[RMDB]
RNA sequence: GGGAACGACUCGAGUAGAGUCGAAAAUUGAAGGUAAAACAGCCUGUGGGUGAAACACACCCACAGGGCCCAUUUGGCGCUAGCACUCUGGUAUCACGGUACCUUUGUGCGCCUGUUUUACCGAAGGGGAGAUUGAUGUUCGCAUCAAUCAAAAGAAACAACAACAACAAC
Reactivity to DMS in 0.01 (KOAc 150mM, MgCl2 10mM, bicine 150mM(pH8.5), 24C), signal-to-noise 9, nucleotides 027 to 129: u020u020g000a190a100g010g010u000a010a010a010a010c000a020g010c020c020u010g020u000g000g000g000u010g010a080a160a110c270a180c010a030c000c000c000a010c000a010g000g000g010c000c000c300a020u030u010u000g010g000c030g000c030u040a070g040c020a010c000u000c000u000g010g020u010a000u020c050a120c270g050g020u000a030c010c010u010u000u010g000u000g000c000g010c020c000u010g000u020u010u000u000a000c020c000g010a050a050g010g010g020g010a200
Reactivity to 2A3 in 0.01 (KOAc 150mM, MgCl2 10mM, bicine 150mM(pH8.5), 24C), signal-to-noise 8, nucleotides 027 to 129: u110u100g050a080a020g000g000u000a000a000a010a000c000a000g000c000c000u000g000u000g000g000g000u010g040a050a100a010c130a010c000a000c060c000c000a000c000a000g000g000g000c000c000c010a060u160u110u300g010g000c010g000c070u090a060g000c000a000c000u000c000u000g000g010u000a000u020c030a060c250g130g000u000a000c000c000u000u000u000g000u010g000c000g000c000c000u000g000u000u000u000u000a000c000c000g000a010a010g000g020g010g000a140